An RNA of 207 nucleotides, treated with DMS and 2A3 and read out base by base.
The 2A3 profile rests on 2,443 reads.
2A3 adducts were read by reverse transcription with SuperScript II with manganese.
It was measured as part of the RMDB library M2RFPK.
RNA sequence: GGGAACGACUCGAGUAGAGUCGAAAAAAACAUUUGUGACUUGCUGAAACGGGACUAAUCUCCUCACCGAGGCUAAGCAAGUAAAAUACGCCUCUCAUAUCCUUACCUGAGGGUGGUAAGGAAAUAACCUGCAACGCUUCCUUCGGGAAGCGUUGAACAUAAGUUCUCGAUUCGUCGAGAACUUAUGAAAAGAAACAACAACAACAAC
Reactivity to DMS in 0.01 (KOAc 150mM, MgCl2 10mM, bicine 150mM(pH8.5), 24C), signal-to-noise 1, nucleotides 027 to 156: a080a080a070c060a190u000u010u010g020u010g000a110c030u000u000g010c000u000g020a070a100a080c050g000g000g010a060c010u020a050a030u010c070u010c010c000u000c060a140c120c040g000a070g020g010c030u000a090a070g080c010a000a030g060u000a030a070a040a100u010a080c100g040c040c000u000c010u000c070a100u000a110u000c010c010u000u010a030c010c010u010g010a100g000g000g020u000g030g050u010a000a020g010g000a020a040a020u010a080a150c060c060u000g000c000a010a010c000g010c010u000u000c010c030u010u000c300g010g050g000a010a000g020c010g050u010u000g010a000a110
Reactivity to 2A3 in 0.01 (KOAc 150mM, MgCl2 10mM, bicine 150mM(pH8.5), 24C), signal-to-noise 3, nucleotides 027 to 156: a000a000a000c090a030u130u090u120g070u020g020a050c010u010u010g000c010u040g020a050a100a080c050g000g020g000a010c020u050a070a070u040c010u030c040c020u070c040a080c020c060g020a010g050g000c040u030a020a020g010c010a040a000g070u130a040a030a000a010u110a020c060g000c000c000u030c010u010c040a040u020a030u210c000c000u010u000a010c010c020u060g040a110g000g090g010u010g000g000u000a000a000g000g000a030a010a000u020a010a020c010c040u070g020c010a000a000c010g000c000u000u000c000c000u020u040c150g020g020g000a000a000g000c010g000u000u000g000a000a000